Structure probing data (2A3 and DMS) for a 177-nucleotide construct. Conditions: 150 mM KOAc, 10 mM MgCl2 and 150 mM bicine (pH 8.5), 24 C. It was measured as part of the RMDB library OK2TRN. 2A3 adducts were read by reverse transcription with SuperScript II with manganese.
[RMDB]
RNA sequence: GGGAACGACUCGAGUAGAGUCGAAAACGUAUAAUUAGCAUAUAUGCUAAUCGCGCGCGAUUAAUGCAUGCCGGCAUUAUACGCGAUUAAUGCGCGCCGCGGCGCCGAUCGAUCGAUCGCGGCCGGCGUACGUGAUAGCGUUCGCGCUAUCACGUACAAAAGAAACAACAACAACAAC
Reactivity to 2A3 in 0.01 (KOAc 150mM, MgCl2 10mM, bicine 150mM(pH8.5), 24C), signal-to-noise 6, nucleotides 027 to 126: c030g070u120a080u050a200a060u020u020a000g020c040a010u180a030u060a070u300g000c010u020a010a010u030c040g000c000g000c000g000c020g080a030u050u220a150a030u140g060c070a060u140g030c020c010g070g010c020a020u120u060a060u100a130c020g000c000g000a000u040u130a100a060u160g020c020g000c000g000c030c020g050c050g060g000c030g000c040c040g040a100u100c040g040a080u100c100g010a020u020c010g000c000g030g000c010c010g000g020c020
Reactivity to DMS in 0.01 (KOAc 150mM, MgCl2 10mM, bicine 150mM(pH8.5), 24C), signal-to-noise 5, nucleotides 027 to 126: c050g020u000a070u000a110a030u010u000a010g010c000a100u010a160u020a110u000g020c000u000a020a010u000c150g020c040g010c040g000c010g010a200u000u000a050a060u000g010c100a070u010g010c090c050g020g010c030a100u000u010a080u010a250c030g000c000g010a080u000u000a070a070u010g000c070g010c020g020c030c050g030c140g010g010c030g020c060c060g020a030u010c100g000a120u010c150g000a060u000c010g010c030g010g000c010c000g010g000c030